[RMDB]
RNA sequence: GGGAACGACUCGAGUAGAGUCGAAAAUAAAUUCUAUAGCAUUUCUUUGACAGCCUGUGACGCAAGCCCUCCAGCAAGGUGCAGACCGGAGUCUGUGCCUCGUUCCCUGGGGCGAUAGCUACUGCUGCAUCCCUGGGUACUUCGGUACCCAGGGAUGAAAAGAAACAACAACAACAAC
Reactivity to 2A3 in 0.01 (KOAc 150mM, MgCl2 10mM, bicine 150mM(pH8.5), 24C), signal-to-noise 2, nucleotides 027 to 126: u010a010a080a040u220u010c100u110a170u160a040g070c050a070u020u060u000c020u000u000u110g050a030c000a020g000c020c010u050g000u040g080a050c040g010c050a070a050g000c000c000c000u070c040c020a020g050c060a020a050g000g020u010g090c010a010g000a000c010c080g280g030a120g030u010c000u000g020u000g000c000c000u030c000g000u010u040c000c000c010u020g050g020g000g030c000g050a030u050a040g000c000u040a010c040u020g060c000u020g010
Reactivity to DMS in 0.01 (KOAc 150mM, MgCl2 10mM, bicine 150mM(pH8.5), 24C), signal-to-noise 1, nucleotides 027 to 126: u100a060a010a000u140u000c100u040a020u100a050g030c060a300u000u000u030c110u000u000u000g000a220c040a120g050c010c220u000g010u030g000a100c070g000c100a050a250g000c000c010c010u000c050c070a130g000c000a020a010g000g040u000g010c000a000g010a000c000c220g020g000a220g050u000c000u010g000u000g020c000c000u000c030g000u000u000c000c010c010u000g000g020g000g010c070g070a000u030a140g000c000u010a110c040u000g000c120u000g010